[RMDB]
RNA sequence: GGGAACGACUCGAGUAGAGUCGAAAAGAGCUAAUAUCUACUUCGUUUGUGCAUACGAUCAAGCACACUAUAAAUAUGCUGAUGGCUUGCUCGAAAGAGCAGUGGCUAGUGGAAUGAUCGGCUCGAAGGGAUAUGUUUUCUUCGGAAAACAUAUCCCAAAAGAAACAACAACAACAAC
Reactivity to DMS in 0.01 (KOAc 150mM, MgCl2 10mM, bicine 150mM(pH8.5), 24C), signal-to-noise 2, nucleotides 027 to 126: g020a000g040c000u020a060a010u010a060u020c050u010a060c020u010u000c020g020u000u010u010g070u000g030c090a170u030a140c020g000a020u010c090a050a030g000c020a070c080a080c150u000a060u000a070a090a090u040a070u030g000c030u000g020a060u040g020g000c010u020u000g000c000u000c000g010a090a040a190g000a000g010c010a050g000u020g010g030c030u000a010g060u000g000g010a080a040u000g000a030u000c090g000g020c000u000c000g020a040a140
Reactivity to 2A3 in 0.01 (KOAc 150mM, MgCl2 10mM, bicine 150mM(pH8.5), 24C), signal-to-noise 5, nucleotides 027 to 126: g000a000g010c090u100a060a040u060a110u140c030u020a070c010u070u060c020g060u050u060u130g090u100g040c040a060u100a230c020g040a070u080c030a080a000g010c020a010c010a030c050u020a040u120a280a220a080u280a100u230g020c040u040g030a110u060g120g030c020u040u120g000c000u000c000g040a050a050a010g000a030g000c030a040g030u100g190g000c000u000a010g010u000g020g060a030a010u040g060a040u090c030g030g000c010u000c010g030a090a040
An RNA of 177 nucleotides, treated with DMS and 2A3 and read out base by base. DMS adducts were read by reverse transcription with MarathonRT. Values cover nucleotides 27 to 126. Source: RMDB library OK1LIB, as collected in RNAgym.